The data come from the RNA Mapping Database (RMDB), library TTRDEL.
This 177-nucleotide RNA was probed chemically with DMS and 2A3.
The DMS profile rests on 3,583 reads.
The RNA was probed in 150 mM KOAc, 10 mM MgCl2 and 150 mM bicine (pH 8.5) at 24 C.

RNA sequence: GGGAACGACUCGAGUAGAGUCGAAAAAGAUACAAAAGAUAUGGAAUGGUCCGAAGGAGCACAGAGGUCGGAAACGACUACCCACCUGUGAACUACUCUGUAGACCAUUCCUAAGUCCGAGAGCAAAGGAUAGAUACAUGUUCGCAUGUAUCUAUCCAAAAGAAACAACAACAACAAC
Reactivity to DMS in 0.01 (KOAc 150mM, MgCl2 10mM, bicine 150mM(pH8.5), 24C), signal-to-noise 4, nucleotides 027 to 126: a090g030a170u020a100c100a060a090a130a060g010a010u000a300u010g000g010a030a000u010g000g020u000c010c050g030a130a220g000g000a050g010c020a010c000a000g010a070g000g010u000c010g000g000a080a080a150c010g000a010c010u000a070c030c040c050a300c090c000u000g010u000g010a080a020c050u010a300c000u000c000u010g010u000a130g010a010c000c020a010u010u000c010c010u000a010a120g010u010c000c030g000a120g010a110g000c170a080a080a070
Reactivity to 2A3 in 0.01 (KOAc 150mM, MgCl2 10mM, bicine 150mM(pH8.5), 24C), signal-to-noise 3, nucleotides 027 to 126: a010g110a060u230a100c090a020a250a000a010g070a030u090a020u220g000g010a020a000u010g000g010u000c030c040g110a280a110g030g000a000g030c000a000c010a000g020a010g000g000u010c030g020g060a070a080a040c020g020a000c010u120a110c010c040c020a070c020c050u010g000u010g020a030a010c010u120a060c000u120c030u070g000u030a000g010a000c000c000a010u000u010c000c000u000a000a000g000u000c010c030g120a120g020a020g170c140a130a050a110